[RMDB]
RNA sequence: GGGAACGACUCGAGUAGAGUCGAAAAUUGUUUCUUCUUGUUCUCGAGGGCCUUCCUUCUUCGGUGAUCCUUCCUCUCCCUGUCGGUGAAGUCUCCCGCACGAGUCCUCUUCCUAGGUCCGGAGUCGUUAGGCCGCUCUUCGGAGCGGCCAAAAGAAACAACAACAACAAC
Reactivity to 2A3 in 0.01 (KOAc 150mM, MgCl2 10mM, bicine 150mM(pH8.5), 24C), signal-to-noise 1, nucleotides 027 to 129: u120u100g030u040u000u000c020u090u010c030u020u130g030u080u080c030u050c040g040a070g000g000g060c000c000u030u050c000c000u000u080c060u120u070c000g020g010u030g020a010u000c000c000u020u040c030c000u000c000u010c000c000c000u000g040u030c040g070g050u060g020a080a000g000u000c020u000c000c000c000g000c000a120c030g010a020g050u000c000c000u000c000u000u010c010c000u010a000g010g040u020c000c010g000g000a010g030u030c000g010u060u000a010